Overview: An RNA of 207 nucleotides, treated with 2A3 and DMS and read out base by base. Values cover nucleotides 27 to 156. The RNA was probed in 150 mM KOAc, 10 mM MgCl2 and 150 mM bicine (pH 8.5) at 24 C.
RNA sequence: GGGAACGACUCGAGUAGAGUCGAAAAAGCAUGUUAGGUUCGCAUGGUGCACAAUUGUGUUAUUAGUAACUAAGUAAGCUUACAAUCGAAAAUGUUUAACCAUAAAAGGGUAAAAUGGUGUAAGACAGAUACCCUCUGAGCUUCGGCUCAGAGGGAAGAUUAGUGCAAGCUUCGGCUUGCACUAAUCAAAAGAAACAACAACAACAAC
Reactivity to 2A3 in 0.01 (KOAc 150mM, MgCl2 10mM, bicine 150mM(pH8.5), 24C), signal-to-noise 3, nucleotides 027 to 156: a000g060c030a010u040g010u070u080a020g020g020u060u060c040g040c040a040u020g100g000u120g050c040a030c030a170a240u250u190g020u000g020u040u030a050u030u030a040g030u050a060a000c020u000a020a040g080u020a060a020g040c030u020u040a020c050a030a100u080c050g040a010a030a000a070u030g020u040u040u010a000a020c000c000a000u080a120a080a010a030g070g000g070u120a010a010a040a040u030g020g000u030g020u020a040a010g000a000c010a010g070a050u170a170c000c000c010u000c000u000g000a000g000c010u060u120c190g110g000c000u000c000a000g000a010g000g000g000a000a010
Reactivity to DMS in 0.01 (KOAc 150mM, MgCl2 10mM, bicine 150mM(pH8.5), 24C), signal-to-noise 1, nucleotides 027 to 156: a100g010c010a050u020g010u020u000a180g010g010u010u010c070g000c090a110u010g010g010u000g000c090a120c060a080a150u000u010g000u000g010u000u000a080u000u010a090g010u000a040a180c050u010a060a190g040u000a070a110g000c000u000u000a040c060a020a080u000c010g000a070a050a110a070u020g000u010u000u010a050a060c000c010a120u000a020a090a120a100g000g000g000u000a000a020a120a050u000g010g010u010g000u000a020a060g040a100c000a120g000a110u000a140c010c000c010u010c000u040g010a020g010c000u000u010c300g030g000c000u000c010a010g000a000g010g000g000a000a000